[RMDB]
RNA sequence: GGGAACGACUCGAGUAGAGUCGAAAAGAUAUGGAUCUCACUUCGCAUCGAUCUAUACUCAGUACGACGUAUACUCGGAAACGAGUAUACGUCGGAACUGUAUAGGGAGCGAAGGAGAUCCUAAGUCGUAAAUGACUUGGUUCGCCAAGUCAUUUACAAAAGAAACAACAACAACAAC
Reactivity to DMS in 0.01 (KOAc 150mM, MgCl2 10mM, bicine 150mM(pH8.5), 24C), signal-to-noise 2, nucleotides 027 to 126: g010a040u020a300u000g000g030a000u000c000u000c000a200c000u000u000c010g020c000a300u000c150g010a040u040c000u000a000u000a000c020u000c080a090g020u000a240c000g000a030c000g010u000a010u000a000c000u000c020g000g000a170a080a140c000g000a020g000u000a000u000a000c000g010u000c000g000g000a050a100c190u000g020u000a010u000a000g000g000g000a040g000c000g020a030a020g020g010a020g010a000u000c000c000u000a020a070g040u000c070
Reactivity to 2A3 in 0.01 (KOAc 150mM, MgCl2 10mM, bicine 150mM(pH8.5), 24C), signal-to-noise 2, nucleotides 027 to 126: g080a040u090a070u180g010g010a010u000c010u010c050a300c300u020u000c020g010c030a300u300c170g040a020u040c020u010a000u000a000c010u000c050a000g000u020a020c000g010a000c000g010u020a000u000a000c010u000c000g000g060a110a060a050c000g020a010g000u010a000u000a000c000g030u000c000g010g000a000a000c000u020g000u000a000u000a000g000g050g010a030g000c010g020a000a020g000g030a000g000a000u000c000c000u000a010a020g030u020c080